[RMDB]
RNA sequence: GGGAACGACUCGAGUAGAGUCGAAAAACACAACAACCAAAAGACAACAGAGUCGCGCAAAUAUCUGGCUCGACUGAUGCGCGACAAAUCGAGCCAUGAAAAGACAGCGGGAAAACCGCUGUCGAAACGACAUGUUCGUCUUCGGACGAGCAUGUCGAAAAGAAACAACAACAACAAC
Reactivity to 2A3 in 0.01 (KOAc 150mM, MgCl2 10mM, bicine 150mM(pH8.5), 24C), signal-to-noise 8, nucleotides 027 to 126: a010c120a010c040a090a050c040a030a070c050c030a070a060a040a030g150a060c080a150a010c040a120g130a030g060u010c000g000c000g000c010a010a110a100u300a100u080c050u050g010g010c000u010c010g070a070c090u200g010a070u090g000c020g000c000g040a000c020a010a010a000u040c010g000a000g000c010c000a040u160g070a050a080a010a000g000a000c000a000g000c000g010g010g040a030a150a060a150c000c000g000c000u010g010u000c010g000a000a000a000
Reactivity to DMS in 0.01 (KOAc 150mM, MgCl2 10mM, bicine 150mM(pH8.5), 24C), signal-to-noise 4, nucleotides 027 to 126: a080c070a070c170a080a030c170a100a170c090c000a030a060a120a090g000a060c190a070a090c120a160g000a160g010u000c000g030c060g000c010a070a070a050u020a100u010c030u000g000g020c000u000c000g010a110c180u030g000a110u010g000c000g000c010g030a010c010a030a030a080u020c000g000a000g010c000c000a070u050g000a050a090a120a080g000a010c010a000g020c000g000g010g020a080a030a120a120c000c000g010c000u000g010u000c000g000a030a090a120